RNA sequence: GGGAACGACUCGAGUAGAGUCGAAAAGAUAUGGAGACAUGCCAUUAUUGACUAUUGUCUCGGAAACGAGACAACGAAUCAAGAAUGGCAACAGCUCCUAAGUCAAAGGCCGUGUUCGCACGGCCAACUCUGCUGGAUAGUUCGCUAUCCAGCAGAGAAAAGAAACAACAACAACAAC
Reactivity to 2A3 in 0.01 (KOAc 150mM, MgCl2 10mM, bicine 150mM(pH8.5), 24C), signal-to-noise 1, nucleotides 027 to 126: g040a040u040a060u170g000g000a000g030a020c070a080u050g010c000c020a000u020u020a050u080u020g000a000c040u030a020u020u000g010u030c000u000c000g000g000a110a090a010c010g000a000g090a000c010a010a000c030g180a090a300u030c000a010a000g030a050a040u020g020g010c000a000a000c000a000g030c010u030c000c010u020a140a060g040u040c060a030a090a160g000g020c000c030g000u000g030u090u100c300g000c170a020c020g000g040c010c000a010a000
Reactivity to DMS in 0.01 (KOAc 150mM, MgCl2 10mM, bicine 150mM(pH8.5), 24C), signal-to-noise 1, nucleotides 027 to 126: g030a110u000a300u010g000g000a070g030a030c110a100u000g010c000c000a020u000u000a030u020u000g010a050c100u000a250u000u000g000u000c000u000c000g000g000a040a110a200c040g000a010g000a060c000a020a000c060g000a050a060u000c030a020a000g000a030a000u000g030g020c000a010a060c300a190g000c030u000c000c000u000a050a140g020u000c020a030a140a200g010g010c000c000g030u000g020u000u000c230g000c000a030c000g020g000c000c000a000a080
The record gives the reactivity of an RNA of 177 nucleotides to 2A3 and DMS. Source: RMDB library TTRDEL, as collected in RNAgym. For DMS, 724 sequencing reads were counted. 2A3 adducts were read by reverse transcription with SuperScript II with manganese. In probing experiments dimethyl sulfate is read out at A N1 and C N3, which are open when not base-paired.